Structure probing data (DMS and 2A3) for a 207-nucleotide construct.
The data come from the RNA Mapping Database (RMDB), library OK3TST.
DMS adducts were read by reverse transcription with MarathonRT.
For DMS, 1,833 sequencing reads were counted.
For 2A3, 1,077 sequencing reads were counted.
RNA sequence: GGGAACGACUCGAGUAGAGUCGAAAACUUUGAGUUCUCAUACAGCCUCAAUUAUGUGUUAGUCAACUCAAGCAUCCAUUAUGUACUCAAUAAUAGGUAUGACACAGCUCUGGACCUCAUUAACACUAUAAGCAGACAGGCACAGGCAGCCUGCAUAUAUUAGCGUACGGUUCGCCGUACGCUAAUAAAAAGAAACAACAACAACAAC
Reactivity to DMS in 0.01 (KOAc 150mM, MgCl2 10mM, bicine 150mM(pH8.5), 24C), signal-to-noise 1, nucleotides 027 to 156: c040u010u030u010g010a140g040u010u000c020u000c000a140u030a150c020a120g000c020c000u000c040a060a090u000u000a070u000g040u000g030u010u000a010g010u000c020a040a050c020u010c040a000a100g010c040a100u010c030c010a120u000u000a090u000g000u010a150c080u020c090a040a060u000a000a220u010a080g000g000u000a040u000g040a090c060a080c040a090g040c080u020c010u020g030g000a050c040c010u020c060a050u010u010a040a070c040a020c050u010a080u000a090a010g060c090a080g030a110c010a000g020g040c010a030c060a050g000g000c050a160g000c000c010u000g110c030a060u000a140
Reactivity to 2A3 in 0.01 (KOAc 150mM, MgCl2 10mM, bicine 150mM(pH8.5), 24C), signal-to-noise 3, nucleotides 027 to 156: c040u100u050u110g050a040g010u070u020c010u000c010a030u050a040c050a000g040c020c030u160c100a130a150u140u130a060u260g020u000g020u050u090a020g040u080c070a070a140c050u030c030a020a020g010c030a070u010c010c000a000u100u050a020u130g140u120a080c040u070c110a030a090u070a120a040u020a100g000g030u130a040u090g010a030c020a000c010a070g070c010u030c030u060g030g100a050c030c010u040c030a020u000u170a020a050c020a000c060u090a040u030a300a020g030c010a000g050a110c010a000g000g000c020a000c020a050g040g040c010a000g000c000c000u000g020c060a020u050a000